Structure probing data (2A3 and DMS) for a 177-nucleotide construct. For DMS the reverse transcriptase was MarathonRT. Conditions: 150 mM KOAc, 10 mM MgCl2 and 150 mM bicine (pH 8.5), 24 C. Source: RMDB library TTRINS, as collected in RNAgym.
RNA sequence: GGGAACGACUCGAGUAGAGUCGAAAAGAUAUGGAUGAGUCUCUAGCGUGAGCAUCGAUCAUACAUUAGAGAUACAUCGGAAACGAUGUAUCUAUUCUGUAUGGGAGCUUCGGGCUCAUCCUAAGUCCUCACAAUGUAUGUUCGCAUACAUUGUGAGAAAAGAAACAACAACAACAAC
Reactivity to 2A3 in 0.01 (KOAc 150mM, MgCl2 10mM, bicine 150mM(pH8.5), 24C), signal-to-noise 4, nucleotides 027 to 126: g020a050u120a050u200g000g000a000u000g000a000g020u050c060u050c150u300a150g160c080g250u300g160a000g000c040a180u300c060g070a080u080c020a000u000a000c000a000u040u070a040g010a000g000a090u000a000c000a000u000c000g010g010a050a090a000c010g000a000u000g010u010a000u010c000u000a020u000u020c010u000g010u000a010u010g000g000g020a020g010c000u030u040c050g010g000g010c000u020c010a000u000c000c000u000a010a010g020u000c010
Reactivity to DMS in 0.01 (KOAc 150mM, MgCl2 10mM, bicine 150mM(pH8.5), 24C), signal-to-noise 4, nucleotides 027 to 126: g000a120u000a250u010g010g000a030u000g000a010g010u010c000u010c220u010a080g040c110g030u020g000a070g010c100a270u010c180g010a200u010c000a010u000a000c000a010u000u000a040g000a010g010a010u000a000c000a000u000c000g010g000a100a120a190c000g010a010u000g010u010a000u010c000u000a030u000u000c040u000g010u000a000u000g000g010g010a110g030c050u000u000c150g000g010g000c010u010c000a000u000c000c000u000a030a070g010u000c060